Structure probing data (2A3 and DMS) for a 177-nucleotide construct. The DMS profile rests on 8,365 reads. Source: RMDB library OK1LIB, as collected in RNAgym. The 2A3 profile rests on 1,713 reads.
[RMDB]
RNA sequence: GGGAACGACUCGAGUAGAGUCGAAAAUAUAUAUCAGUUAGAGAGGUAUGUGGCCCAUCCCGCGGUAGGUAAGUCGUAUCAUACCCUUUGGUUGUAUGCUAAGUGGGCAGUCUGAGGAUGAUAUAUAGUGUAUUAAAAUUUUCGAAUUUUAAUACACAAAAGAAACAACAACAACAAC
Reactivity to 2A3 in 0.01 (KOAc 150mM, MgCl2 10mM, bicine 150mM(pH8.5), 24C), signal-to-noise 3, nucleotides 027 to 126: u050a010u000a000u010a030u010c000a000g130u170u130a040g010a010g020a030g180g030u070a060u070g080u090g040g010c000c030c000a080u130c030c040c020g050c060g080g040u130a040g100g040u080a030a030g050u030c040g040u050a040u110c020a010u080a130c000c010c000u050u060u080g070g000u050u110g060u070a020u130g030c030u040a080a070g070u050g010g050g010c010a000g040u050c020u000g030a030g070g040a060u020g000a000u020a010u010a010u040a050
Reactivity to DMS in 0.01 (KOAc 150mM, MgCl2 10mM, bicine 150mM(pH8.5), 24C), signal-to-noise 3, nucleotides 027 to 126: u050a040u010a020u010a020u000c020a080g010u010u030a070g000a100g000a070g010g000u010a020u000g020u020g000g010c010c010c030a090u020c030c000c010g010c100g000g000u010a070g010g000u010a090a070g000u030c040g030u000a080u020c040a050u010a090c040c010c050u010u010u010g010g010u010u010g010u020a040u000g020c100u010a060a110g030u020g010g010g010c020a040g000u000c030u010g000a090g000g010a080u000g010a010u010a010u010a040u010a120